[RMDB]
An RNA of 177 nucleotides, treated with DMS and 2A3 and read out base by base. The RNA was probed in 150 mM KOAc, 10 mM MgCl2 and 150 mM bicine (pH 8.5) at 24 C. Reactivities are given for positions 27 through 126. The DMS profile rests on 44,558 reads. For 2A3, 75,473 sequencing reads were counted. The data come from the RNA Mapping Database (RMDB), library OK2TST.
RNA sequence: GGGAACGACUCGAGUAGAGUCGAAAAGAUCCGGAUGUCGCCCACGACGUCCUCGAGCAGCCGGAGCAGCUGCGGCGGUACUUCGAGGAAGCGCUGCGUCUGUACGAUCUCCCGAUCGACGUCAGCCCUCCGUAAUACUAUUCGUAGUAUUACGGAGAAAAGAAACAACAACAACAAC
Reactivity to DMS in 0.01 (KOAc 150mM, MgCl2 10mM, bicine 150mM(pH8.5), 24C), signal-to-noise 9, nucleotides 027 to 126: g010a060u000c020c160g010g000a040u010g010u000c050g000c060c050c080a110c110g010a040c040g010u000c010c020u000c030g010a070g010c070a110g010c040c010g010g000a120g010c060a120g010c070u010g010c020g010g010c020g000g010u000a090c100u010u010c030g010a080g000g000a080a080g010c080g010c060u000g010c020g010u000c010u000g000u000a090c100g000a060u000c150u000c020c020c080g010a070u010c060g000a080c070g000u010c050a120g010c090c090
Reactivity to 2A3 in 0.01 (KOAc 150mM, MgCl2 10mM, bicine 150mM(pH8.5), 24C), signal-to-noise 9, nucleotides 027 to 126: g030a040u030c020c020g010g010a030u050g020u050c020g020c030c040c020a060c060g030a020c010g040u030c000c020u010c010g030a040g010c060a010g000c010c020g060g060a060g030c050a030g030c040u160g020c000g020g030c000g010g030u090a080c020u060u070c030g070a060g050g050a040a040g080c050g000c060u060g000c000g020u000c020u040g050u040a040c040g020a050u010c020u020c040c010c010g010a040u050c030g030a030c030g050u080c030a050g040c020c010